An RNA of 177 nucleotides, treated with DMS and 2A3 and read out base by base. For 2A3, 4,219 sequencing reads were counted. The reactions ran in a buffer of 150 mM KOAc, 10 mM MgCl2 and 150 mM bicine (pH 8.5), at 24 C. It was measured as part of the RMDB library OK2TRN.
[RMDB]
RNA sequence: GGGAACGACUCGAGUAGAGUCGAAAAGUCAAUAACUAUCACUGCAACUGUCGACCUGGACAUAUGGGUCGGCACUGUGAGCACAAGGUGGACUUUUGUGCCCAGAGUCCGUGCCAGAAUGGUGGCAGACGUAAGCGAAAUUCGUUUCGCUUACGUCAAAAGAAACAACAACAACAAC
Reactivity to DMS in 0.01 (KOAc 150mM, MgCl2 10mM, bicine 150mM(pH8.5), 24C), signal-to-noise 4, nucleotides 027 to 126: g010u030c010a110a080u020a060a070c020u000a110u010c090a110c120u000g000c040a120a060c140u000g010u010c000g010a020c000c000u010g020g020a160c260a110u010a070u000g000g010g020u010c000g000g010c010a010c040u010g010u010g000a090g020c070a060c150a070a120g000g010u010g000g010a030c010u000u000u000u000g000u010g020c000c000c000a180g000a090g000u010c040c090g010u000g020c000c000a040g010a100a100u010g010g020u000g010g030c040a090
Reactivity to 2A3 in 0.01 (KOAc 150mM, MgCl2 10mM, bicine 150mM(pH8.5), 24C), signal-to-noise 4, nucleotides 027 to 126: g020u010c010a020a190u150a220a050c040u060a030u180c030a020c050u030g010c060a110a060c110u010g000u010c020g000a020c000c010u050g110g090a100c070a130u250a180u300g020g000g000u020c000g000g000c000a010c000u010g000u000g090a050g020c030a040c020a150a020g070g030u050g050g020a000c000u000u000u000u070g100u070g060c010c000c000a030g030a000g050u050c100c080g030u050g010c000c000a090g060a210a170u210g090g000u060g000g000c010a020